[RMDB]
An RNA of 177 nucleotides, treated with DMS and 2A3 and read out base by base. The reactions ran in a buffer of 150 mM KOAc, 10 mM MgCl2 and 150 mM bicine (pH 8.5), at 24 C. For DMS, 1,085 sequencing reads were counted. DMS (dimethyl sulfate) methylates the pairing face of unpaired adenines and cytosines. For DMS the reverse transcriptase was MarathonRT. 2A3 adducts were read by reverse transcription with SuperScript II with manganese. The data come from the RNA Mapping Database (RMDB), library 15KREP.
RNA sequence: GGGAACGACUCGAGUAGAGUCGAAAACAUAGGCUCUCUCUUAAGGAGUUGAUGAUGUAUGCCGCUGAUCCAGCCAUGCACAUUGCCUCCUCUAACGCUUUUCUUGAUUUGAGGACAUCAUGUUUUAGAUCAAACAUGUGUUCGCACAUGUUUGAUCAAAAGAAACAACAACAACAAC
Reactivity to DMS in 0.01 (KOAc 150mM, MgCl2 10mM, bicine 150mM(pH8.5), 24C), signal-to-noise 1, nucleotides 027 to 126: c150a040u010a220g000g010c030u000c020u000c040u010c030u000u030a150a040g000g000a010g010u000u000g000a020u000g010a090u000g070u000a000u000g020c180c160g020c020u000g010a110u010c110c060a070g010c050c020a020u000g010c010a020c010a020u010u000g020c240c000u000c000c000u000c120u010a070a110c080g000c110u000u000u000u000c060u000u000g020a070u000u000u000g030a050g000g000a050c060a060u010c060a030u020g000u000u000u010u020a130
Reactivity to 2A3 in 0.01 (KOAc 150mM, MgCl2 10mM, bicine 150mM(pH8.5), 24C), signal-to-noise 2, nucleotides 027 to 126: c020a030u170a030g030g000c010u000c000u000c000u000c000u070u100a040a020g030g010a000g000u010u010g020a010u010g020a040u010g010u010a010u000g090c130c040g000c040u010g040a220u120c110c010a000g000c010c000a000u010g000c020a000c000a000u000u020g000c020c010u000c000c020u070c060u040a060a030c050g020c040u110u080u070u040c020u110u140g110a190u030u010u080g070a030g010g050a010c000a020u120c020a030u070g080u030u030u030u030a020